[RMDB]
RNA sequence: GGGAACGACUCGAGUAGAGUCGAAAAUUUGUCAAUCGUUGACUGUAGGUCCGAUCCAUGGAGAAAGGGCUCCUUAAGCCAUCCUUCCAAGCGUCUGAUGCUCGCUUUUUGCUGGACGUUGAAGCGAGUCUGGAGCGAUAUUCGUAUCGCUCCAGACAAAAGAAACAACAACAACAAC
Reactivity to DMS in 0.01 (KOAc 150mM, MgCl2 10mM, bicine 150mM(pH8.5), 24C), signal-to-noise 1, nucleotides 027 to 126: u040u120u010g000u000c000a040a070u030c080g050u010u010g000a090c040u000g000u020a060g010g000u010c010c020g030a180u000c070c140a130u020g000g000a060g020a020a160a160g010g000g000c000u000c030c080u030u110a110a210g010c010c040a050u000c050c050u000u000c010c040a070a050g000c080g000u000c020u010g000a060u010g000c040u020c040g000c010u030u010u020u050u010g000c050u000g000g000a030c150g000u020u030g020a000a080g020c150g010a210